[RMDB]
RNA sequence: GGGAACGACUCGAGUAGAGUCGAAAACUCUUGGCCCUUUCUUCCUGUCACCUUAAGGCGAGAUGGUUGCUGCAGCUCCAGACAUCGUGUCUCCAUUCAGAACAGGAAGAAAAGGGCUGGGUACCGUGGCUCAUGCCUGUAAUCUCAGCACUUUGGGCCUUGCGAAGUUGUUCGCAACUUCGCAAGGAAAAGAAACAACAACAACAAC
Reactivity to 2A3 in 0.01 (KOAc 150mM, MgCl2 10mM, bicine 150mM(pH8.5), 24C), signal-to-noise 1, nucleotides 027 to 156: c110u060c030u030u060g030g000c000c000c020u000u000u030c000u010u010c000c010u000g000u010c080a130c070c000u010u010a030a000g040g050c110g090a020g000a010u000g000g050u040u050g000c000u030g080c140a160g000c070u060c070c000a110g020a300c020a040u030c040g260u010g000u150c000u030c000c000a050u000u000c010a000g000a030a040c000a000g000g000a000a000g000a020a020a000a000g000g000g040c020u000g000g020g000u050a080c060c020g090u080g020g020c040u060c190a130u190g070c030c010u000g150u140a110a200u080c010u030c100a030g030c130a110c140u090u140u090g060g040g000

Chemical mapping of a 207-nucleotide RNA with 2A3. The RNA was probed in 150 mM KOAc, 10 mM MgCl2 and 150 mM bicine (pH 8.5) at 24 C. It was measured as part of the RMDB library OK3TST.